An RNA of 177 nucleotides, treated with DMS and 2A3 and read out base by base. Conditions: 150 mM KOAc, 10 mM MgCl2 and 150 mM bicine (pH 8.5), 24 C. Values cover nucleotides 27 to 126. The DMS profile rests on 2,403 reads.

[RMDB]
RNA sequence: GGGAACGACUCGAGUAGAGUCGAAAAGAUAUGGACAGUGAACUACGGAUCCAAGAGCGAAGAACUCGGAAACGAGGGAGCUCGACGAUCCGCACUGUCCUAAGUCAAAGUCGCGUUCGCGCGACAAUCAUCUCUACAACUUCGGUUGUAGAGAUGAAAAAGAAACAACAACAACAAC
Reactivity to DMS in 0.01 (KOAc 150mM, MgCl2 10mM, bicine 150mM(pH8.5), 24C), signal-to-noise 3, nucleotides 027 to 126: g010a030u010a300u000g010g000a010c000a000g010u010g010a080a070c170u010a300c020g000g000a020u000c000c040a050a300g000a010g020c000g010a080a160g010a130a200c000u000c000g000g000a080a030a180c000g000a020g010g000g020a090g020c000u000c000g000a300c300g010a000u000c000c000g000c000a000c000u010g000u000c000c000u000a000a070g010u000c060a120a120a070g030u000c000g010c020g020u000u010c200g010c000g010c000g000a000c010a040a080
Reactivity to 2A3 in 0.01 (KOAc 150mM, MgCl2 10mM, bicine 150mM(pH8.5), 24C), signal-to-noise 3, nucleotides 027 to 126: g030a030u080a050u160g000g010a000c000a000g010u000g010a120a050c120u150a050c300g000g000a000u020c010c010a030a020g000a000g000c040g150a300a010g030a110a060c010u010c020g010g030a070a090a060c020g010a000g000g000g020a010g000c000u000c010g000a020c030g010a000u000c010c000g000c000a000c000u020g000u000c000c000u010a040a000g000u000c040a020a090a090g000u000c010g000c000g030u070u090c290g010c000g020c010g140a010c010a000a040